RNA sequence: GGGAACGACUCGAGUAGAGUCGAAAAAGCGGGCGCUUUCGGUACCCACGCAGGCCGUGUUCUUCGAGACGCCGUCCAAUCCCAUGCAGUCGCUGGUGGAUAUCGCUGCGGUGACCGAGCUGGCACACACUCCCAAACGAUUCGUCGUUUGGGAGUGAAAAGAAACAACAACAACAAC
Reactivity to 2A3 in 0.01 (KOAc 150mM, MgCl2 10mM, bicine 150mM(pH8.5), 24C), signal-to-noise 5, nucleotides 027 to 126: a000g090c060g030g020g020c060g010c050u020u060u030c000g040g010u080a140c000c000c000a000c010g020c050a090g110g100c080c020g030u020g040u060u040c050u020u020c020g030a030g010a100c040g030c030c020g000u020c000c020a020a060u020c000c000c030a010u100g040c030a020g070u140c050g020c030u060g010g040u050g020g050a050u070a030u140c050g000c050u070g020c010g050g020u040g010a020c000c020g000a010g030c020u030g030g010c010a010c010a000
Reactivity to DMS in 0.01 (KOAc 150mM, MgCl2 10mM, bicine 150mM(pH8.5), 24C), signal-to-noise 2, nucleotides 027 to 126: a070g010c000g040g040g000c040g000c040u010u000u010c020g000g000u020a030c040c020c000a040c040g020c030a090g000g000c130c030g040u000g000u000u020c030u000u020c040g010a080g010a060c060g000c040c020g010u040c070c050a110a100u010c040c030c040a090u010g000c100a140g000u000c070g010c040u030g000g020u020g000g000a040u000a030u030c030g040c000u010g000c070g000g010u000g010a020c040c050g000a060g000c000u000g000g020c060a040c090a150